[RMDB]
RNA sequence: GGGAACGACUCGAGUAGAGUCGAAAAUCUUUUUGGUGUUUUGGCAGAUUAUUUUAGGAGACCAUUCACCUACCGUUACUAUCAAGUGGCUGAAUUUUUGAGUUCUGAAUCCACCCAGGUUUUUACAGAUGUAACUUCAGCAUUGGCACCUAAAGACAUCUAUCAAGGUUUUCGAACCUUGAUAGAUAAAAGAAACAACAACAACAAC
Reactivity to 2A3 in 0.01 (KOAc 150mM, MgCl2 10mM, bicine 150mM(pH8.5), 24C), signal-to-noise 3, nucleotides 027 to 156: u050c010u070u100u020u070u100g030g010u010g050u010u070u080u060g020g000c050a030g040a190u070u090a160u130u300u100u130a150g070g050a110g040a080c010c000a020u040u040c010a000c000c010u010a040c020c040g060u070u060a060c040u070a080u150c060a110a030g060u030g090g000c010u000g060a090a100u070u090u060u120u270g080a120g040u060u000c030u020g050a060a050u010c030c010a020c060c030c010a040g020g040u000u060u010u110u190a070c030a000g060a050u050g030u060a050a040c000u070u080c020a010g000c000a090u030u040g050g000c020a000c030c020u030a020a030a030g050a010c020
Reactivity to DMS in 0.01 (KOAc 150mM, MgCl2 10mM, bicine 150mM(pH8.5), 24C), signal-to-noise 1, nucleotides 027 to 156: u000c000u000u000u010u000u000g020g070u000g040u000u000u000u010g030g010c080a170g000a090u000u000a070u020u010u010u010a110g010g010a230g010a300c030c010a030u020u010c020a040c100c000u000a070c050c040g040u000u000a090c030u010a100u000c060a120a150g040u000g020g000c050u000g020a020a030u000u000u000u020u000g020a090g010u020u010c050u010g040a090a090u000c050c030a030c030c050c030a240g000g010u000u000u000u000u000a150c000a100g010a030u010g010u000a030a030c020u000u010c030a020g000c020a080u010u000g000g000c040a200c030c010u010a040a030a070g000a110c080
An RNA of 207 nucleotides, treated with 2A3 and DMS and read out base by base. 2A3 adducts were read by reverse transcription with SuperScript II with manganese. Source: RMDB library OK3TST, as collected in RNAgym. DMS (dimethyl sulfate) methylates the pairing face of unpaired adenines and cytosines. For 2A3, 1,533 sequencing reads were counted.